Structure probing data (2A3) for a 177-nucleotide construct.
It was measured as part of the RMDB library OK2TRN.
Reactivities are given for positions 27 through 126.
RNA sequence: GGGAACGACUCGAGUAGAGUCGAAAAGCCACUUACGGACACUCCGUCAGACGUACAGUCUCACUCGCAUGACUAGUCAAAGUCAUGACUGUGAGCGAGUACGACUGAUGGUCUGUUCGAGUGUGGAGCAGCAUCCCAGUUUCGACUGGGAUGCUGCAAAAGAAACAACAACAACAAC
Reactivity to 2A3 in 0.01 (KOAc 150mM, MgCl2 10mM, bicine 150mM(pH8.5), 24C), signal-to-noise 1, nucleotides 027 to 126: g010c010c000a010c010u040u180a080c000g020g010a000c000a000c020u000c010c000g000u000c000a000g000a050c000g010u010a000c010a040g080u050c000u000c020a000c000u020c070g090c030a010u000g000a000c000u050a050g190u190c030a170a300a010g020u010c000a070u020g070a100c020u030g000u000g000a000g000c000g070a040g000u000a000c020g000a010c010u000g000a010u030g000g000u000c020u000g040u010u000c000g010a040g050u030g010u010g000g000a060